[RMDB]
RNA sequence: GGGAACGACUCGAGUAGAGUCGAAAACGUACGUGGAGACACGUACGACGAGACUUCGGUCUCGAAUCGCACGAACUGGUGACGUGCGCGAGUGAGGCGUCGGUGGUCGUCGAGUCCAUGGAUGCAAUAACUCGCUCGUAAAUAAAUCACAUUAGAACACCCUAUCAUGGUUCGCCAUGAUAGGGUGAAAAGAAACAACAACAACAAC
Reactivity to 2A3 in 0.01 (KOAc 150mM, MgCl2 10mM, bicine 150mM(pH8.5), 24C), signal-to-noise 3, nucleotides 027 to 156: c020g000u000a000c000g000u000g000g000a020g020a030c000a010c020g000u000a000c000g000a010c000g000a000g000a000c000u080u130c300g100g000u000c000u000c000g010a020a060u110c060g010c000a000c000g050a180a070c060u130g080g010u050g020a010c000g040u010g000c010g020c000g010a000g000u020g000a000g020g080c010g010u000c120g110g020u030g000g010u030c070g080u060c090g160a050g030u000c000c000a000u020g250g020a020u030g000c010a090a130u060a230a100c000u000c000g000c000u000c000g000u040a000a080a000u180a020a070a010u090c040a020c040a110u100u160a030g010a070a030
Chemical mapping of a 207-nucleotide RNA with 2A3.
Conditions: 150 mM KOAc, 10 mM MgCl2 and 150 mM bicine (pH 8.5), 24 C.
The 2A3 profile rests on 1,431 reads.